Chemical mapping of a 177-nucleotide RNA with 2A3 and DMS. The RNA was probed in 150 mM KOAc, 10 mM MgCl2 and 150 mM bicine (pH 8.5) at 24 C. For DMS, 5,394 sequencing reads were counted. For 2A3 the reverse transcriptase was SuperScript II with manganese.
[RMDB]
RNA sequence: GGGAACGACUCGAGUAGAGUCGAAAAGAUAUGGAGCCUCCCAGGGACGUUUGACGUCGGAAACGACCGAGUCCCAUGGGAGGGCUCCUAAGUCAAACUGCAUCCAAGCUUCGGCUUGGAUGCAGAAUCAGUAGUAUAACUUCGGUUAUACUACUGAAAAAGAAACAACAACAACAAC
Reactivity to 2A3 in 0.01 (KOAc 150mM, MgCl2 10mM, bicine 150mM(pH8.5), 24C), signal-to-noise 2, nucleotides 027 to 126: g010a000u090a040u150g010g000a020g000c000c010u000c000c000c000a010g010g000g000a010c050g050u160u300u300g070a070c050g010u010c020g010g010a100a140a020c020g000a010c000c020g010a030g000u020c030c010c040a020u030g000g000g000a020g000g000g020c010u020c000c000u030a070a010g010u010c030a020a070a130c020u010g000c000a010u010c000c010a010a000g020c000u020u160c300g130g020c000u000u000g000g010a000u000g000c030a000g000a000a010
Reactivity to DMS in 0.01 (KOAc 150mM, MgCl2 10mM, bicine 150mM(pH8.5), 24C), signal-to-noise 4, nucleotides 027 to 126: g000a040u000a300u000g010g000a010g000c000c000u010c010c000c000a040g000g000g000a010c000g010u000u010u010g000a170c300g000u000c000g010g000a100a110a140c010g000a010c000c010g000a080g010u000c000c000c000a030u000g010g000g000a020g000g010g010c000u000c000c000u000a010a070g010u010c030a110a110a240c000u000g000c000a000u010c000c000a000a010g010c010u000u000c220g010g000c010u000u000g000g000a000u000g010c000a000g000a060a080